[RMDB]
RNA sequence: GGGAACGACUCGAGUAGAGUCGAAAACUGGUCUAUCCGUGGCACCUCCCACCAAGUGAAAGCGGCUUCCCCAUCCCUCUCCCCUGGCAAUGUCCUCCUUCUCCAGGGCUCUAAGUACUUACAAGACUUGCAUAGUAGAUUUCGAUCUACUAUGCAAAAAAGAAACAACAACAACAAC
Reactivity to 2A3 in 0.01 (KOAc 150mM, MgCl2 10mM, bicine 150mM(pH8.5), 24C), signal-to-noise 4, nucleotides 027 to 126: c020u020g000g040u040c020u060a110u040c050c020g030u070g030g000c030a020c030c030u030c000c010c000a050c020c030a080a030g060u080g150a160a050a010g040c040g030g020c030u060u070c010c010c000c020a030u040c000c020c000u000c010u020c010c010c000c000u010g020g000c030a030a050u070g020u030c000c010u020c000c010u040u030c020u000c020c020a040g020g010g000c000u000c010u020a080a040g020u030a100c040u090u050a060c050a080a080g020a090c040
Reactivity to DMS in 0.01 (KOAc 150mM, MgCl2 10mM, bicine 150mM(pH8.5), 24C), signal-to-noise 7, nucleotides 027 to 126: c060u010g000g010u010c050u010a080u020c050c040g020u010g010g010c060a070c050c030u000c020c020c030a090c070c060a080a080g010u010g020a040a070a100g010c060g010g000c050u010u000c020c010c010c030a100u010c030c010c010u010c030u000c030c020c010c030u000g000g010c100a050a070u020g010u010c020c010u010c030c030u000u000c040u010c010c050a080g020g000g010c030u010c040u010a040a070g010u010a070c080u000u010a090c120a080a100g010a090c140
This 177-nucleotide RNA was probed chemically with 2A3 and DMS. DMS adducts were read by reverse transcription with MarathonRT. Conditions: 150 mM KOAc, 10 mM MgCl2 and 150 mM bicine (pH 8.5), 24 C.